Source information
The record gives the reactivity of an RNA of 207 nucleotides to 2A3 and DMS. 2A3 adducts were read by reverse transcription with SuperScript II with manganese. Reactivities are given for positions 27 through 156.
RNA sequence: GGGAACGACUCGAGUAGAGUCGAAAAAAGCCUUUGGCUCUCACAGUGGAGCUCUCCUUGCCGGAACCACCCAGGAAAUGGGCUGAGCUCCAGGCCGGCGGAGGGAAGCCCGAAGAAGCCCAUGUAUUUGCUGUCAGGUGGAGGGCAGCCCUGCCUGGCAAUUAGUAAUCUUCGGAUUACUAAUUGCAAAAGAAACAACAACAACAAC
Reactivity to 2A3 in 0.01 (KOAc 150mM, MgCl2 10mM, bicine 150mM(pH8.5), 24C), signal-to-noise 2, nucleotides 027 to 156: a010a000g120c070c000u140u020u070g010g010c000u010c000u040c070a090c030a100g050u080g040g000a020g040c010u010c010u060c020c010u030u090g080c010c010g000g000a090a070c040c010a090c000c040c030a050g100g060a130a220a160u100g020g020g010c100u020g010a030g040c010u000c040c010a030g010g000c000c020g000g030c050g040g010a050g000g000g010a040a010g020c000c000c000g020a070a000g020a010a000g010c000c010c070a050u130g050u070a160u120u210u260g060c080u050g040u090c080a000g030g000u010g010g010a040g020g020g000c000a010g000c000c000c010u050g010c000c000u010g060
Reactivity to DMS in 0.01 (KOAc 150mM, MgCl2 10mM, bicine 150mM(pH8.5), 24C), signal-to-noise 1, nucleotides 027 to 156: a070a030g000c000c010u000u000u010g020g010c010u000c010u010c070a060c070a180g020u000g020g000a050g020c020u000c020u010c000c020u000u000g040c010c020g030g000a100a110c040c080a090c050c000c010a120g000g030a060a140a060u010g000g020g030c060u000g000a120g000c020u000c000c040a010g000g010c060c080g000g020c010g030g000a070g020g040g000a140a120g020c000c010c040g020a110a130g020a120a250g000c020c000c000a090u060g040u000a120u000u000u090g000c050u000g000u000c090a060g000g030u000g010g010a100g010g020g000c080a130g010c020c000c000u000g010c000c000u000g000
High 2A3 reactivity points to a flexible backbone, as in loops and unpaired stretches.